[RMDB]
RNA sequence: GGGAACGACUCGAGUAGAGUCGAAAAUUAAACGCAACGACUCGAGUAGAGUCGAAAACAAAACGACUCGAGUUGAGUCGAAAACCCAACGACUCGAGUAGAGUCGAAGCGAACGCAAGCGAAAAAACUCGUAACUAAACUUCGGUUUAGUUACGAGAAAAGAAACAACAACAACAAC
Reactivity to 2A3 in 0.01 (KOAc 150mM, MgCl2 10mM, bicine 150mM(pH8.5), 24C), signal-to-noise 1, nucleotides 027 to 126: u030u000a050a160a000c300g000c300a010a000c010g000a000c000u010c020g020a010g020u100a020g030a010g000u010c000g000a010a000a010a020c100a080a120a000a000c000g000a000c000u000c000g050a060g080u020u150g040a000g020u000c000g010a000a000a000a000c000c000c000a000a000c000g000a000c000u010c010g020a040g080u110a010g030a000g010u000c000g000a010a000g010c000g010a050a020c040g010c120a040a070g060c060g140a080a030a010a000a030a030
Structure probing data (2A3) for a 177-nucleotide construct. 2A3 adducts were read by reverse transcription with SuperScript II with manganese. The reactions ran in a buffer of 150 mM KOAc, 10 mM MgCl2 and 150 mM bicine (pH 8.5), at 24 C. The 2A3 profile rests on 3,828 reads. Reactivities are given for positions 27 through 126. Source: RMDB library M2PK90, as collected in RNAgym.